Record summary
The record gives the reactivity of an RNA of 177 nucleotides to DMS and 2A3. Values cover nucleotides 27 to 126. Values are in units of 0.01, from 0 to 300, in steps of 10. The RNA was probed in 150 mM KOAc, 10 mM MgCl2 and 150 mM bicine (pH 8.5) at 24 C.

RNA sequence: GGGAACGACUCGAGUAGAGUCGAAAAGAAAAGUACGGUAAAGAAGCGCACCAAAAGCUCGGCCAAGAAAAGGCCGAGCAAAGGUGCGCAAAGAACGAGCCGCAAUCGUGCAAGAAAGAAAAGAAAACACUAUAGUGGGUUUCGACCCACUAUAGUGAAAAGAAACAACAACAACAAC
Reactivity to DMS in 0.01 (KOAc 150mM, MgCl2 10mM, bicine 150mM(pH8.5), 24C), signal-to-noise 2, nucleotides 027 to 126: g040a010a080a150a100g000u000a090c000g000g030u010a060a030a140g010a150a110g000c040g010c010a020c000c010a120a080a110a020g000c000u000c050g000g010c000c000a070a120g020a060a060a060a010g030g040c000c020g000a000g080c010a000a060a140g090g040u040g000c030g020c010a000a010a050g000a110a060c210g000a090g010c110c060g000c130a120a040u000c030g020u010g000c010a010a090g020a140a100a190g030a110a030a110a140g010a090a030a070a180
Reactivity to 2A3 in 0.01 (KOAc 150mM, MgCl2 10mM, bicine 150mM(pH8.5), 24C), signal-to-noise 1, nucleotides 027 to 126: g070a020a100a010a000g020u080a010c000g060g000u070a010a100a170g070a180a050g000c000g000c000a000c020c000a000a000a000a110g000c000u000c000g000g000c000c000a130a100g230a130a090a000a000g000g030c000c000g020a000g000c000a000a000a000g000g000u000g000c010g000c000a000a000a000g010a010a010c050g000a010g090c070c000g050c050a000a130u040c050g030u040g050c010a070a050g040a060a100a000g120a020a050a030a030g110a000a030a000a020